[RMDB]
RNA sequence: GGGAACGACUCGAGUAGAGUCGAAAAGCAACGCAAAGCCGCGGCAAGUGGAGUUAGCGAGAAGAGACUAGGCUUUGGUUUCUUGAAGUGAAGCGGUCACCAAUCAGGUGUGGUAGUUACCGUAAAAAUAACCGCUCUUUGUUCGCAAAGAGCGGAAUCAGUUCUCUUAGUUCGCUAAGAGAACUGAAAAAGAAACAACAACAACAAC
Reactivity to 2A3 in 0.01 (KOAc 150mM, MgCl2 10mM, bicine 150mM(pH8.5), 24C), signal-to-noise 3, nucleotides 027 to 156: g030c030a040a020c040g010c050a070a030a010g030c020c040g000c040g030g050c050a080a060g030u070g040g050a090g040u140u180a040g030c060g040a040g040a110a040g060a000g000a030c060u050a040g050g050c020u040u020u050g030g000u010u040u020c010u020u050g060a100a040g030u030g070a080a040g040c020g010g010u020c020a010c010c000a040a080u130c060a070g100g040u110g010u020g080g040u060a040g030u080u080a010c000c020g010u050a040a070a000a010a010u140a070a030c000c000g020c000u000c000u000u000u000g010u020u060c140g010c120a000a000a000g000a000g000c010g010g000a000a010
Reactivity to DMS in 0.01 (KOAc 150mM, MgCl2 10mM, bicine 150mM(pH8.5), 24C), signal-to-noise 2, nucleotides 027 to 156: g020c030a050a100c030g000c040a070a080a150g000c060c010g030c060g020g020c070a060a160g050u010g030g010a150g000u000u000a110g020c040g020a160g010a090a080g010a130g050a060c050u010a180g030g000c070u000u010u000g060g000u000u000u000c040u000u000g000a110a100g000u000g020a110a190g020c040g000g030u000c010a070c030c010a040a080u020c050a100g030g040u000g000u000g000g010u010a060g040u000u010a000c010c020g010u000a000a060a030a100a050u000a050a170c000c000g000c020u000c000u000u000u000g000u000u010c280g050c030a010a010a000g000a040g010c030g010g010a010a000
The data come from the RNA Mapping Database (RMDB), library M2RFPK. The record gives the reactivity of an RNA of 207 nucleotides to 2A3 and DMS. For 2A3 the reverse transcriptase was SuperScript II with manganese. The reactions ran in a buffer of 150 mM KOAc, 10 mM MgCl2 and 150 mM bicine (pH 8.5), at 24 C. Values cover nucleotides 27 to 156. For 2A3, 1,878 sequencing reads were counted.